[RMDB]
RNA sequence: GGGAACGACUCGAGUAGAGUCGAAAAGUUUCAGUACUACCGCCAAUCACUUGCACGGAUUGCUGUGUAAGGUCUUGUCCAUCAGCAGAGAGUACAAUAUCUUGCGUUGCUGUCCACCCCCCCAGUGUUUGUGAUAGUGAUAUCAACACUGAGGUCGCUGUCUACAUCUAUUCGUAGAUGUAGACAGAAAAGAAACAACAACAACAAC
Reactivity to 2A3 in 0.01 (KOAc 150mM, MgCl2 10mM, bicine 150mM(pH8.5), 24C), signal-to-noise 2, nucleotides 027 to 156: g030u010u040u070c050a050g080u090a040c050u050a030c020c000g030c020c000a060a080u140c020a080c150u070u140g080c050a040c110g040g100a160u090u130g070c040u040g000u020g000u060a060a000g020g020u020c020u060u040g030u030c050c000a130u030c030a080g120c120a080g090a010g020a010g140u090a050c040a050a020u050a040u040c020u030u040g020c010g100u030u040g020c020u020g020u050c050c000a060c000c110c000c010c000c000c000a010g000u000g050u030u090u160g100u040g020a020u030a020g060u010g060a030u010a020u130c010a000a010c000a000c010u010g000a090g030g020u060c020g000
Reactivity to DMS in 0.01 (KOAc 150mM, MgCl2 10mM, bicine 150mM(pH8.5), 24C), signal-to-noise 2, nucleotides 027 to 156: g020u010u010u000c020a110g020u010a180c100u010a090c030c010g030c010c040a110a110u000c050a050c020u010u010g040c020a040c040g020g010a210u000u010g040c030u000g000u000g000u010a060a040g010g010u010c060u000u000g010u000c040c030a180u000c020a140g020c080a130g010a130g010a150g010u010a040c050a050a100u020a030u000c020u010u000g030c090g010u000u010g020c000u010g010u000c040c000a220c030c000c030c010c000c010c000a050g020u010g010u010u000u000g010u000g000a020u000a040g000u000g000a170u000a040u010c010a040a080c020a020c020u000g000a050g000g040u000c050g010
Chemical mapping of a 207-nucleotide RNA with 2A3 and DMS. 2A3 adducts were read by reverse transcription with SuperScript II with manganese. It was measured as part of the RMDB library OK3TST. The DMS profile rests on 5,992 reads.